[RMDB]
RNA sequence: GGGAACGACUCGAGUAGAGUCGAAAACUUGGCAGUCGCCGGCUCGACGAAGAACUCCAUCUCCAUCUGCUCGAACUCGCGGGUCCGGAAGAUGAAGUUGCCCGGAGUGAUCUCGUUGCGAAAGCUCCCGUAAACCGUGUUUCGACACGGUUUACGGAAAAGAAACAACAACAACAAC
Reactivity to 2A3 in 0.01 (KOAc 150mM, MgCl2 10mM, bicine 150mM(pH8.5), 24C), signal-to-noise 1, nucleotides 027 to 126: c020u090u220g120g000c020a070g120u130c060g030c030c000g000g040c070u040c010g020a010c040g010a050a000g020a050a020c000u010c000c010a110u000c020u000c030c000a040u000c010u050g030c080u090c070g070a050a030c000u000c010g000c090g110g000g030u000c010c020g000g020a060a000g040a040u060g020a030a030g070u120u100g060c030c020c000g000g000a020g010u050g050a060u030c010u000c030g040u020u090g030c000g040a180a070a050g000c020u020c000
Reactivity to DMS in 0.01 (KOAc 150mM, MgCl2 10mM, bicine 150mM(pH8.5), 24C), signal-to-noise 2, nucleotides 027 to 126: c080u010u000g010g000c040a080g000u000c080g020c070c050g000g020c080u000c050g000a030c090g000a080a110g000a200a040c010u000c030c020a130u010c010u000c010c030a060u000c020u010g050c080u010c010g010a070a040c040u000c100g020c180g000g000g000u010c060c020g000g000a050a050g020a020u000g010a030a050g000u010u000g020c190c150c070g000g010a000g010u000g000a170u020c060u000c040g010u000u000g030c090g000a090a120a110g000c050u000c020